An RNA of 177 nucleotides, treated with 2A3 and DMS and read out base by base. It was measured as part of the RMDB library OK1LIB.

RNA sequence: GGGAACGACUCGAGUAGAGUCGAAAAGAUAUGGUUCCGAAGGAUGAACCGGAUAUGGACAGUUCCAAUAAGAUUUCAUUCUUGAACAAAAAUCCAUUUUUUGAUUUAUUUCAUCUAUUCCAUGACCCAUUUGUAGGGGCUUCGGCCCCUACAAAUGAAAAGAAACAACAACAACAAC
Reactivity to 2A3 in 0.01 (KOAc 150mM, MgCl2 10mM, bicine 150mM(pH8.5), 24C), signal-to-noise 4, nucleotides 027 to 126: g040a040u120a050u190g060g000u100u090c110c110g080a110a020g050g000a040u060g000a010a000c050c090g020g010a030u060a030u020g000g000a020c060a040g030u060u000c050c010a040a040u200a160a020g040a060u170u230u120c050a070u050u100c020u050u050g030a010a000c020a030a150a050a030a030u010c020c010a050u090u000u000u010u030u150g070a150u050u160u200a090u040u180u010c020a000u000c010u060a230u090u050c020c010a050u100g060a040c000c000
Reactivity to DMS in 0.01 (KOAc 150mM, MgCl2 10mM, bicine 150mM(pH8.5), 24C), signal-to-noise 2, nucleotides 027 to 126: g000a160u000a090u020g000g000u020u000c300c180g010a120a030g000g000a020u000g000a010a040c300c030g000g000a000u020a030u020g060g020a050c160a300g000u000u000c020c300a070a080u020a000a060g010a050u050u060u000c200a050u040u020c020u060u000g010a020a030c120a070a040a110a170a220u000c000c050a040u000u000u000u000u040u000g000a030u020u010u040a070u050u000u000c040a010u000c030u000a260u000u030c000c000a000u000g000a120c000c000